[RMDB]
RNA sequence: GGGAACGACUCGAGUAGAGUCGAAAAUAAAAGGAGGAGGAGAAAUAUAGCGCGAGAUCGGUCCUCCCACGCGCGUCUCGCGCUGAUAAGCGGAAUAAGAGGAUGAUUAAUAGAUAGGGCGCAAAAACUAGGUUAGUAACUUCGGUUACUAACCUAGAAAAGAAACAACAACAACAAC
Reactivity to 2A3 in 0.01 (KOAc 150mM, MgCl2 10mM, bicine 150mM(pH8.5), 24C), signal-to-noise 1, nucleotides 027 to 126: u130a000a080a010a010g050g000a000g000g050a010g010g010a060g120a070a160a010u220a080u150a050g020c000g000c010g000a000g000a030u070c040g050g030u030c010c050u040c000c020c000a070c010g090c000g020c020g000u000c000u000c010g000c000g030c010u000g000a000u020a010a020g090c010g000g040a080a060u090a130a030g000a050g090g010a000u020g030a010u090u290a120a090u050a090g060a080u080a060g000g000g010c020g000c000a060a030a000a000a030
Reactivity to DMS in 0.01 (KOAc 150mM, MgCl2 10mM, bicine 150mM(pH8.5), 24C), signal-to-noise 2, nucleotides 027 to 126: u000a090a050a070a090g020g030a070g000g030a070g010g010a080g010a050a090a100u020a120u010a050g000c000g010c020g000a010g010a010u000c070g010g000u000c070c090u010c000c010c000a060c210g030c100g020c120g010u000c000u000c000g010c010g050c000u000g000a070u020a060a100g000c060g000g000a070a040u000a060a040g000a060g010g000a070u000g000a070u000u000a040a040u010a040g000a060u000a040g010g000g010c030g010c080a030a050a040a070a100

An RNA of 177 nucleotides, treated with 2A3 and DMS and read out base by base. For 2A3 the reverse transcriptase was SuperScript II with manganese. The reactions ran in a buffer of 150 mM KOAc, 10 mM MgCl2 and 150 mM bicine (pH 8.5), at 24 C. For DMS the reverse transcriptase was MarathonRT.